[RMDB]
RNA sequence: GGGAACGACUCGAGUAGAGUCGAAAAGAUAUGGAGCCACUACCCACCUUAUGCACCCAUCGAUCACUCAUUCUUCGGAAACGAAGAAUGAGUGGGAGGGUUCCCAUAAGAGGUGGCUCCUAAGUCACAGUACGAAAUUGUUCGCAAUUUCGUACUGAAAAGAAACAACAACAACAAC
Reactivity to DMS in 0.01 (KOAc 150mM, MgCl2 10mM, bicine 150mM(pH8.5), 24C), signal-to-noise 2, nucleotides 027 to 126: g050a190u000a170u000g010g020a020g010c000c010a020c000u010a090c020c050c040a300c070c010u000u000a010u000g060c300a020c040c000c000a210u010c200g030a160u010c010a010c010u040c000a000u000u000c010u010u000c000g010g000a110a080a230c020g010a000a020g000a000a010u000g000a020g060u000g000g000g000a100g010g000g000u000u000c050c180c000a000u000a020a000g000a150g000g000u000g000g000c000u020c010c010u000a000a060g010u010c100a240
Reactivity to 2A3 in 0.01 (KOAc 150mM, MgCl2 10mM, bicine 150mM(pH8.5), 24C), signal-to-noise 2, nucleotides 027 to 126: g120a060u300a210u300g000g030a040g020c010c010a010c020u250a300c050c020c010a050c030c020u040u000a020u030g160c300a080c010c000c000a270u300c080g080a110u100c020a020c020u000c000a010u060u000c000u010u010c020g030g000a120a080a050c010g000a000a040g040a010a020u020g010a000g000u010g000g000g010a040g030g010g000u050u060c000c010c010a000u010a000a010g000a030g000g000u010g000g020c000u030c000c000u000a010a000g000u030c050a040